[RMDB]
RNA sequence: GGGAACGACUCGAGUAGAGUCGAAAACGAAGCGCGUCAGGCGCUGCAAAACGAUCUCAACGUGAUGCUGUUUUCCGAUAACGUCUCAGUUGAAGAUGAACUGGCGCUCAAGCAACUGGCCCACGAAAUUAGUGCGAGUCUUCGGACUCGCACUAAUAAAAGAAACAACAACAACAAC
Reactivity to DMS in 0.01 (KOAc 150mM, MgCl2 10mM, bicine 150mM(pH8.5), 24C), signal-to-noise 1, nucleotides 027 to 126: c130g000a240a110g000c190g050c050g100u000c210a050g010g020c030g090c020u030g000c130a020a030a090a100c180g000a140u000c000u000c020a060a040c020g000u000g000a060u010g000c060u000g000u000u000u000u000c300c250g010a010u000a020a060c040g000u000c010u000c000a130g000u020u000g000a030a060g000a010u000g000a080a020c000u000g010g000c020g020c010u000c070a040a090g000c040a100a080c100u000g000g010c030c020c040a100c220g000a040a050